An RNA of 207 nucleotides, treated with DMS and 2A3 and read out base by base. DMS adducts were read by reverse transcription with MarathonRT. Reactivities are given for positions 27 through 156. Conditions: 150 mM KOAc, 10 mM MgCl2 and 150 mM bicine (pH 8.5), 24 C.
RNA sequence: GGGAACGACUCGAGUAGAGUCGAAAAGGAUCUUCGGAUCCAGCUACGGGGUCGUCGUUGAUCGUUCCCUAGCUUUGAUCUGUACUGAAGCCUCCACGGUACAGGGAGCUACCAACGGGAGACGACGGAGGCACCCUAACUGGCCAUUCGUGGCCAAUAUAGAUUUAAGCUUCGGCUUAAAUCUAUAAAAAGAAACAACAACAACAAC
Reactivity to DMS in 0.01 (KOAc 150mM, MgCl2 10mM, bicine 150mM(pH8.5), 24C), signal-to-noise 1, nucleotides 027 to 156: g000g010a030u000c000u000u000c280g020g000a030u010c000c010a070g010c090u000a060c070g030g030g010g010u000c050g020u000c040g030u030u000g010a090u000c010g020u000u000c050c020c020u010a050g020c020u000u000u020g010a010u020c000u000g000u000a030c030u010g000a020a090g000c000c000u000c000c010a280c030g000g000u010a030c000a030g010g010g000a040g030c010u000a060c050c020a060a080c090g010g010g010a190g020a040c000g000a050c110g020g010a100g070g070c030a100c020c020c000u010a050a090c070u010g020g020c010c000a130u000u000c190g000u000g030g010c000c020a010a060
Reactivity to 2A3 in 0.01 (KOAc 150mM, MgCl2 10mM, bicine 150mM(pH8.5), 24C), signal-to-noise 5, nucleotides 027 to 156: g000g000a010u030c020u080u140c300g100g000a000u000c000c010a020g060c040u130a080c080g020g010g020g080u080c030g010u010c010g070u090u060g030a060u030c000g000u010u020c010c020c000u010a000g000c010u300u170u010g000a010u010c000u000g000u010a000c000u030g070a180a060g010c000c000u000c000c000a020c000g000g000u000a000c000a000g000g000g000a000g000c000u010a020c060c050a030a040c020g010g020g010a040g020a020c020g020a010c050g010g000a010g010g000c010a030c000c000c000u060a140a120c100u070g020g010c010c000a040u080u090c230g130u120g000g000c000c000a000a010